RNA sequence: GGGAACGACUCGAGUAGAGUCGAAAACGGGUUCGGAUGCUUUCAGCUACCUUGGUGGAGAUGCUGUGUACAGUAGUGGCGAAGCAAUUGAAGCUGAUAAGCGUUGUAAGCCUGGAGACGCGGCAUCAUAUGGUAUCGGAUUCGUCCGAUACCAUAUAAAAGAAACAACAACAACAAC
Reactivity to 2A3 in 0.01 (KOAc 150mM, MgCl2 10mM, bicine 150mM(pH8.5), 24C), signal-to-noise 7, nucleotides 027 to 126: c050g020g020g010u100u080c050g030g020a030u070g040c030u030u070u070c020a020g010c010u050a110c010c010u060u090g100g000u090g050g120a090g010a030u010g000c000u000g010u040g020u120a100c020a030g080u180a020g080u070g060g030c010g040a080a030g020c020a020a030u040u140g140a140a040g000c010u030g010a140u100a280a030g020c010g000u000u010g060u090a060a010g000c020c000u030g050g020a140g000a030c040g000c020g010g000c030a010u030c020
Reactivity to DMS in 0.01 (KOAc 150mM, MgCl2 10mM, bicine 150mM(pH8.5), 24C), signal-to-noise 7, nucleotides 027 to 126: c060g010g010g000u000u000c090g010g000a070u020g000c030u000u000u010c050a070g010c030u010a080c040c050u020u020g010g010u010g010g010a190g010a020u000g010c000u020g000u000g020u010a070c040a100g000u030a100g020u030g000g020c000g000a150a090g000c030a020a030u020u040g010a120a120g010c010u000g020a100u050a090a030g030c010g010u000u010g000u020a040a300g000c020c000u010g020g000a120g000a040c020g020c010g000g000c010a000u010c040